[RMDB]
RNA sequence: GGGAACGACUCGAGUAGAGUCGAAAAACGUCGCUGAAGUGCACGCUCUCUGGGUAUCAGUCGGUGGUGCACCUCGGCGUCGGCGGACCUGCUGGGCUCGCAGGUGGGGCGGUGGCGACGCUCAGCGCAUAGUGGCAUACUUCGGUAUGCCACUAUGAAAAGAAACAACAACAACAAC
Reactivity to DMS in 0.01 (KOAc 150mM, MgCl2 10mM, bicine 150mM(pH8.5), 24C), signal-to-noise 4, nucleotides 027 to 126: a080c010g010u000c000g020c000u010g010a010a030g020u000g010c010a000c000g000c020u000c110u010c000u000g010g030g030u060a120u060c010a010g010u000c300g020g000u010g010g010u010g000c000a020c010c030u010c000g000g020c010g010u000c000g010g010c090g000g020a160c010c000u010g000c000u000g000g010g010c010u000c010g010c020a060g000g000u010g000g000g000g010c040g020g010u060g000g000c010g010a020c180g000c000u000c010a010g000c000g020
Reactivity to 2A3 in 0.01 (KOAc 150mM, MgCl2 10mM, bicine 150mM(pH8.5), 24C), signal-to-noise 9, nucleotides 027 to 126: a000c010g000u010c000g000c010u010g010a010a010g000u000g000c000a000c000g050c000u020c000u000c000u010g070g000g250u300a270u300c010a010g030u020c020g020g020u280g070g040u000g000c000a000c000c000u000c000g010g000c000g010u010c000g010g020c080g040g040a100c000c000u010g000c000u000g000g010g000c000u000c010g010c020a040g010g100u110g040g020g000g010c090g030g090u090g030g000c000g000a010c090g000c000u010c000a000g000c020g000